An RNA of 177 nucleotides, treated with 2A3 and DMS and read out base by base. Source: RMDB library OK2TST, as collected in RNAgym. For 2A3, 2,750 sequencing reads were counted. The DMS profile rests on 2,703 reads.
RNA sequence: GGGAACGACUCGAGUAGAGUCGAAAAGCAGUGGGAAUGUGCUCAAGCCACCCCAAGAGCGACAUUAUAUUCUUAGGCAUCCAUUCCACUUGGCAAAGCCAUGCCUUAAAUCUCCUCCAGACAACCACUUGACAAUACCUUUCGAGGUAUUGUCAAGAAAAGAAACAACAACAACAAC
Reactivity to 2A3 in 0.01 (KOAc 150mM, MgCl2 10mM, bicine 150mM(pH8.5), 24C), signal-to-noise 2, nucleotides 027 to 126: g020c050a010g030u070g010g040g040a070a090u050g010u020g000c000u020c050a040a040g060c030c040a010c040c000c020c000a020a020g030a010g040c010g060a020c020a030u110u170a100u080a030u280u080c050u070u070a050g020g000c020a020u050c020c020a010u120u000c010c010a020c040u030u060g030g000c030a130a000a030g000c000c010a030u040g040c010c000u000u110a080a140a040u000c020u000c020c010u010c000c000a020g000a040c000a010a050c000c000a050
Reactivity to DMS in 0.01 (KOAc 150mM, MgCl2 10mM, bicine 150mM(pH8.5), 24C), signal-to-noise 3, nucleotides 027 to 126: g030c090a040g030u010g000g000g000a050a060u010g030u020g030c020u000c060a090a220g020c050c050a180c070c030c040c040a100a140g010a070g010c050g000a050c070a050u000u000a080u010a100u000u000c060u000u000a070g010g010c010a060u000c070c040a090u010u000c030c010a090c080u000u000g000g030c090a060a060a120g010c030c040a110u000g000c020c020u000u000a020a050a060u010c030u000c010c020u010c030c030a070g000a040c070a040a070c070c120a170

For 2A3 the reverse transcriptase was SuperScript II with manganese.